The data come from the RNA Mapping Database (RMDB), library RFM100. Structure probing data (DMS and 2A3) for a 177-nucleotide construct. Reactivities are given for positions 27 through 126. The DMS profile rests on 7,304 reads. The RNA was probed in 150 mM KOAc, 10 mM MgCl2 and 150 mM bicine (pH 8.5) at 24 C. High 2A3 reactivity points to a flexible backbone, as in loops and unpaired stretches.
RNA sequence: GGGAACGACUCGAGUAGAGUCGAAAAGCCAGGCCGUCAUAAAAGCACAAGCCAAUGUGCUUCCCUCUAAAGAGGUUGACGGCGAGCGGUAUCAUGCUGAAAGGAAGCAGGGGUACCGCAGACGCCGAAUGAGAAGACCGUUCGCGGUCUUCUCAUUAAAAGAAACAACAACAACAAC
Reactivity to DMS in 0.01 (KOAc 150mM, MgCl2 10mM, bicine 150mM(pH8.5), 24C), signal-to-noise 4, nucleotides 027 to 126: g000c010c020a150g010g010c010c000g010u000c000a020u000a000a000a020a000g060c000a000c000a010a030g030c080c300a280a140u010g000u000g010c000u000u000c040c000c000u000c000u030a040a150a220g010a010g000g010u000u000g000a020c000g000g000c010g000a010g000c000g000g000u000a020u010c010a030u000g030c000u000g040a160a190a240g030g010a150a020g000c000a000g000g000g000g000u000a010c000c010g050c010a030g000a110c180g000c120c120g010
Reactivity to 2A3 in 0.01 (KOAc 150mM, MgCl2 10mM, bicine 150mM(pH8.5), 24C), signal-to-noise 4, nucleotides 027 to 126: g140c000c000a020g020g010c000c000g000u000c000a010u000a000a000a000a000g000c000a000c000a010a020g030c020c010a040a040u030g000u000g010c000u000u010c020c000c000u020c010u130a190a180a080g010a000g010g000u000u000g000a000c000g000g000c010g000a000g000c000g000g000u000a000u000c000a000u000g010c000u050g080a160a150a160g220g130a100a010g010c000a000g040g060g020g010u000a010c000c000g010c000a000g020a020c080g060c060c070g060